Description:
Source: RMDB library OK2TRN, as collected in RNAgym. Structure probing data (DMS and 2A3) for a 177-nucleotide construct. DMS adducts were read by reverse transcription with MarathonRT.
[RMDB]
RNA sequence: GGGAACGACUCGAGUAGAGUCGAAAAGCGCUCGACAACGGGGACACACUGACGCUGAAACACUAUAUCGGCGACCCGUCACAGAAGGCCGACCUAUCUGGGAUCAAAGCGAUCUCGCGGCUCCGACUCCUAAAUACGCAUUCGUGCGUAUUUAGGAAAAAGAAACAACAACAACAAC
Reactivity to DMS in 0.01 (KOAc 150mM, MgCl2 10mM, bicine 150mM(pH8.5), 24C), signal-to-noise 4, nucleotides 027 to 126: g010c160g040c030u000c070g000a180c180a060a030c030g030g020g030g000a100c130a110c110a090c140u010g020a180c040g020c000u000g010a100a090a080c140a110c250u010a070u020a110u000c000g010g010c020g010a110c030c020c040g010u000c130a090c100a070g000a070a090g000g020c020c020g010a110c060c020u000a090u010c130u010g000g000g000a030u000c010a050a100a080g040c160g010a050u000c030u000c000g020c090g000g000c060u010c020c050g010a190c090
Reactivity to 2A3 in 0.01 (KOAc 150mM, MgCl2 10mM, bicine 150mM(pH8.5), 24C), signal-to-noise 2, nucleotides 027 to 126: g040c060g010c020u020c020g020a030c020a080a000c010g000g050g050g060a040c040a010c010a040c150u170g170a040c030g010c000u020g030a020a110a020c130a040c170u160a090u050a040u300c010g030g000c010g010a060c020c000c020g030u020c050a060c000a070g100a120a030g050g010c020c020g040a050c030c000u090a110u120c090u160g000g000g000a000u040c010a090a260a160g180c100g000a020u010c010u010c010g040c040g050g030c030u020c050c030g050a060c030
The 2A3 profile rests on 2,326 reads.